[RMDB]
The data come from the RNA Mapping Database (RMDB), library TTRDEL. This 177-nucleotide RNA was probed chemically with 2A3 and DMS. As a SHAPE reagent, 2A3 marks flexible, mostly unpaired nucleotides at the ribose 2'-OH. The 2A3 profile rests on 3,910 reads. DMS adducts were read by reverse transcription with MarathonRT. The RNA was probed in 150 mM KOAc, 10 mM MgCl2 and 150 mM bicine (pH 8.5) at 24 C.
RNA sequence: GGGAACGACUCGAGUAGAGUCGAAAAGAUAUGGAGCCAUGGGAGCUAGGGUCGGAAACGACCUAAUAGCGAAGAACAUGACUCCUAAGUCAAAAUCCGUUAGAACUCUUCGGAGUUCUAACGGAAAGUAUACUACCCGGUUCGCCGGGUAGUAUACAAAAGAAACAACAACAACAAC
Reactivity to 2A3 in 0.01 (KOAc 150mM, MgCl2 10mM, bicine 150mM(pH8.5), 24C), signal-to-noise 1, nucleotides 027 to 126: g000a000u020a000u050g010g000a010g000c010c000a000u000g010g030g000a010g000c010u000a010g020g010g000u000c000g010g000a020a010a000c010g000a000c000c010u040a140a110u030a020g000c000g220a300a000g000a010a010c000a000u010g020a020c000u000c010c000u000a010a000g000u000c000a000a030a010a230u010c010c000g000u000u000a010g000a000a000c010u000c000u100u130c300g050g000a000g000u010u000c000u000a000a010c010g010g000a000a010a000
Reactivity to DMS in 0.01 (KOAc 150mM, MgCl2 10mM, bicine 150mM(pH8.5), 24C), signal-to-noise 2, nucleotides 027 to 126: g010a000u000a020u010g000g000a010g010c020c010a000u000g000g020g000a020g030c000u000a100g010g000g010u000c000g010g000a000a000a010c000g000a000c000c000u000a030a060u000a010g020c000g010a110a170g000a100a210c000a000u000g000a010c000u000c000c000u000a000a080g000u000c000a130a090a130a140u000c000c000g000u000u000a020g000a010a000c000u000c000u000u030c200g020g000a010g000u000u000c000u010a000a000c000g000g000a000a010a050